[RMDB]
RNA sequence: GGGAACGACUCGAGUAGAGUCGAAAAUAGCAAUAUGAUUUGCUCGUACGCAAGAGGCAAAGGAGCGCGCAUCUUUCGUAACCGCGCGCAAGAACACGGUAAAUUUAUCUGCCGGCGAAAGAACGUCCCAGGAGCACAUAUUCGUAUGUGCUCCUGGAAAAGAAACAACAACAACAAC
Reactivity to 2A3 in 0.01 (KOAc 150mM, MgCl2 10mM, bicine 150mM(pH8.5), 24C), signal-to-noise 1, nucleotides 027 to 126: u060a010g000c010a020a040u050a150u300g160a130u040u030u040g000c000u010c000g060u080a040c100g050c090a060a040g100a020g160g000c020a000a110a000g070g000a090g000c020g030c000g020c040a040u030c030u000u170u070c060g080u050a120a020c060c000g000c010g020c020g000c000a000a020g020a020a030c040a000c060g000g000u090a070a170a220u110u220u160a070u070c060u000g080c000c000g010g010c030g020a030a020a000g010a110a000c000g010u100c030
Reactivity to DMS in 0.01 (KOAc 150mM, MgCl2 10mM, bicine 150mM(pH8.5), 24C), signal-to-noise 1, nucleotides 027 to 126: u000a050g040c060a090a000u000a130u000g040a140u000u000u000g000c010u020c120g000u050a080c080g000c110a130a080g040a180g040g030c040a020a020a150g000g000a150g010c050g010c100g000c040a160u010c040u000u000u000c100g000u000a120a100c080c000g010c010g030c020g000c020a040a090g040a080a060c140a000c060g020g000u010a030a020a220u000u000u010a030u040c100u000g010c030c000g000g000c000g030a000a040a050g020a110a220c130g000u000c080
This 177-nucleotide RNA was probed chemically with 2A3 and DMS. It was measured as part of the RMDB library OK2TST. For 2A3 the reverse transcriptase was SuperScript II with manganese. For DMS, 605 sequencing reads were counted. Reactivities are given for positions 27 through 126. 2A3 is a SHAPE reagent: it acylates the 2'-hydroxyl of flexible nucleotides of all four kinds.